[RMDB]
RNA sequence: GGGAACGACUCGAGUAGAGUCGAAAAUCAAAUAAUAGCUUUGUUUUUAUUCUAAAAUGUGACCUUGGCUAAGCCACAUAAUCUCUCUGGGUCUCUGUAUGUGGGAGCUACUGAUAAUACCUGUAUCUCUGUUUCAGGUGAUGAUCAAAAUGCCUAAGAUUAUUACCUAGUUCGCUAGGUAAUAAUCAAAAGAAACAACAACAACAAC
Reactivity to DMS in 0.01 (KOAc 150mM, MgCl2 10mM, bicine 150mM(pH8.5), 24C), signal-to-noise 1, nucleotides 027 to 156: u000c040a030a080a150u040a070a130u010a140g030c050u000u000u000g010u000u020u000u000u010a070u050u000c050u020a120a070a110a070u010g010u020g010a040c030c010u000u010g090g000c030u000a030a140g010c040c030a040c010a050u000a070a090u010c020u010c030u000c020u030g030g010g000u000c000u000c010u010g010u000a080u000g060u000g020g020g010a080g030c020u000a070c080u000g010a120u000a030a100u000a100c030c010u000g040u000a030u000c060u000c050u000g020u000u000u000c000a000g010g030u010g020a040u000g020a100u000c040a050a080a070a050u010g000c020c030u020a110a300
Reactivity to 2A3 in 0.01 (KOAc 150mM, MgCl2 10mM, bicine 150mM(pH8.5), 24C), signal-to-noise 2, nucleotides 027 to 156: u050c020a020a080a040u170a080a080u040a120g020c030u090u050u060g030u080u170u070u040u090a120u140u110c050u080a080a090a090a120u110g010u020g030a030c020c000u030u030g010g000c010u040a000a060g030c010c020a020c000a040u140a130a130u050c050u010c010u010c040u100g030g010g050u020c040u000c030u050g090u100a070u100g020u030g030g030g010a020g020c020u060a050c020u040g030a040u040a200a080u120a090c020c000u020g020u090a050u080c060u000c020u100g110u120u090u020c020a000g000g000u020g030a040u050g020a010u070c040a050a090a030a050u170g000c020c010u030a060a020
This 207-nucleotide RNA was probed chemically with DMS and 2A3.
The data come from the RNA Mapping Database (RMDB), library OK3TST.
Conditions: 150 mM KOAc, 10 mM MgCl2 and 150 mM bicine (pH 8.5), 24 C.
Reactivities are given for positions 27 through 156.